[RMDB]
RNA sequence: GGGAACGACUCGAGUAGAGUCGAAAAUGGUAGGUUUUCUACCGCACUGAGUCGGGAGCACUACUGUGUUAGCCGUACAGUUCACGGACACCACAAAUAGUAGUAGAUUCACUACUGUGGUAGACAAGGGUAAAUCUUACUUCGGUAAGAUUUGCCCAAAAGAAACAACAACAACAAC
Reactivity to 2A3 in 0.01 (KOAc 150mM, MgCl2 10mM, bicine 150mM(pH8.5), 24C), signal-to-noise 7, nucleotides 027 to 126: u080g020g020u020a040g000g050u020u030u090u060c000u000a000c000c000g000c010a030c030u050g010a020g060u040c010g000g000g030a010g000c010a000c020u140a040c040u020g000u000g010u010u050a050g070c010c000g000u020a020c020a040g020u020u080c080a020c050g030g020a020c020a000c020c000a000c000a000a060a040u150a020g010u000a000g000u000a010g030a220u110u080c040a000c020u020a000c000u010g000u000g010g000u020a020g020a030c050a060a100
Reactivity to DMS in 0.01 (KOAc 150mM, MgCl2 10mM, bicine 150mM(pH8.5), 24C), signal-to-noise 9, nucleotides 027 to 126: u030g000g020u010a020g000g000u030u020u020u040c010u000a010c000c000g010c210a070c040u010g000a130g000u000c000g000g000g000a110g010c050a050c030u020a100c210u000g000u000g010u000u010a060g010c010c010g010u020a070c050a070g020u010u010c110a080c090g000g000a200c140a030c010c000a010c020a000a090a140u030a050g000u000a020g010u000a080g000a140u040u020c130a050c020u000a010c040u000g010u000g000g010u000a040g010a160c150a080a130
Overview: Chemical mapping of a 177-nucleotide RNA with 2A3 and DMS. Source: RMDB library OK1LIB, as collected in RNAgym. Reactivities are given for positions 27 through 126. For DMS, 40,130 sequencing reads were counted. For 2A3 the reverse transcriptase was SuperScript II with manganese. The RNA was probed in 150 mM KOAc, 10 mM MgCl2 and 150 mM bicine (pH 8.5) at 24 C.